[RMDB]
RNA sequence: GGGAACGACUCGAGUAGAGUCGAAAAGGAUCAGAUUCUGUUUAUGGCUUAAAUGAUCACUCUGGCUACUGUACAGAUCAGAAAGAGUAUAAAAGCAGCAAAAUUAUAAAAGUGGAGGUUAUUAAAAAGUAUGGUCACUAUUCGUAGUGACCAUACUAAAAGAAACAACAACAACAAC
Reactivity to DMS in 0.01 (KOAc 150mM, MgCl2 10mM, bicine 150mM(pH8.5), 24C), signal-to-noise 1, nucleotides 027 to 126: g010g030a040u000c060a010g000a060u010u010c000u010g020u000u010u010a080u020g000g050c010u000u000a060a060a070u020g030a060u000c080a060c090u000c040u000g000g010c030u000a110c110u010g040u010a120c080a090g030a060u010c030a070g010a100a030a070g010a060g010u000a090u000a050a080a070a130g010c060a010g030c120a060a060a070a060u000u020a050u010a060a030a090a110g070u000g000g010a070g010g000u010u000a040u000u010a130a070a060a060
Reactivity to 2A3 in 0.01 (KOAc 150mM, MgCl2 10mM, bicine 150mM(pH8.5), 24C), signal-to-noise 1, nucleotides 027 to 126: g030g030a000u030c000a030g050a080u160u030c030u020g110u060u110u070a150u210g060g010c020u050u120a060a080a020u150g000a030u080c030a030c060u080c100u050g080g000c000u030a050c000u030g000u000a020c000a030g030a150u060c000a030g080a000a040a000g020a000g100u050a000u080a240a050a150a000g030c000a020g000c000a000a000a300a000u200u080a280u080a220a300a090a000g080u070g000g070a030g000g100u030u000a080u140u250a170a150a000a000